An RNA of 177 nucleotides, treated with DMS and 2A3 and read out base by base. Reactivities are rounded to 0.1 and cut off at 0 and 3.
[RMDB]
RNA sequence: GGGAACGACUCGAGUAGAGUCGAAAAGCUUAUCGUGGGGGCAACAGCGCUUGGCGCUGAUCGCCCGAGCGCUGGUAAAACACCCUGCGCUACUGAUUCUCGAUGAACCAUUGCAAGGAUUAGAUCCGGACUUGUAACUAUUCGUAGUUACAAGUCCAAAAGAAACAACAACAACAAC
Reactivity to DMS in 0.01 (KOAc 150mM, MgCl2 10mM, bicine 150mM(pH8.5), 24C), signal-to-noise 4, nucleotides 027 to 126: g010c120u000u000a050u000c010g030u000g010g010g000g010g000c170a100a090c000a020g030c000g000c000u000u000g020g010c210g050c080u000g020a060u000c170g010c030c000c010g010a010g020c010g020c000u000g000g000u000a030a060a070a070c220a240c040c000c010u000g000c020g020c050u000a040c110u000g010a160u000u000c010u010c040g010a140u010g010a070a100c080c040a070u000u000g000c110a060a110g000g000a050u010u010a070g000a300u010c080c130
Reactivity to 2A3 in 0.01 (KOAc 150mM, MgCl2 10mM, bicine 150mM(pH8.5), 24C), signal-to-noise 3, nucleotides 027 to 126: g030c040u080u040a010u090c010g000u030g000g020g000g000g010c020a050a020c000a050g000c000g010c010u000u010g020g000c080g000c080u030g050a070u120c050g010c000c010c010g000a000g000c000g000c000u000g010g090u120a070a050a010a010c070a080c000c000c000u010g000c010g020c000u040a050c070u010g010a090u080u000c020u010c040g110a150u140g050a080a080c060c000a130u040u190g030c060a120a050g130g010a070u070u100a070g060a190u070c070c070
The reactions ran in a buffer of 150 mM KOAc, 10 mM MgCl2 and 150 mM bicine (pH 8.5), at 24 C. For DMS the reverse transcriptase was MarathonRT.